RNA sequence: GGGAACGACUCGAGUAGAGUCGAAAACACAUGCCACCAUGCCCAGCUAAUUUUUGUAUUUUUUUGUAGAGAUGAGGUGUCUUCAUGUUGCCCGUGCCAGUCUCAAACUCCUGGGCUCAAGCGAUCCUCGUGUAGUAAGCUUCGGCUUACUACACGAAAAAGAAACAACAACAACAAC
Reactivity to DMS in 0.01 (KOAc 150mM, MgCl2 10mM, bicine 150mM(pH8.5), 24C), signal-to-noise 1, nucleotides 027 to 126: c130a160c110a040u000g000c050c020a020c090c020a070u000g010c000c020c030a100g040c040u010a030a020u000u010u000u000u010g000u000a000u000u000u000u010u070u000u010g010u010a080g010a140g010a080u000g010a060g020g010u000g000u000c060u000u000c050a060u000g000u000u000g000c020c020c020g000u000g040c100c060a110g000u000c060u020c080a040a100a030c070u010c070c010u010g020g000g030c030u000c090a050a090g020c110g000a090u000c050c050
Reactivity to 2A3 in 0.01 (KOAc 150mM, MgCl2 10mM, bicine 150mM(pH8.5), 24C), signal-to-noise 1, nucleotides 027 to 126: c030a000c010a000u120g090c040c010a020c020c000a020u050g000c020c000c000a040g010c030u070a030a160u040u080u110u030u170g020u100a170u030u020u010u070u090u060u080g050u050a040g020a000g000a140u040g070a020g000g050u060g000u000c000u120u020c040a050u070g030u090u060g060c000c010c010g010u010g020c000c010a000g040u040c020u060c040a070a100a040c040u040c000c030u040g010g000g040c000u040c040a030a040g020c030g010a010u030c000c020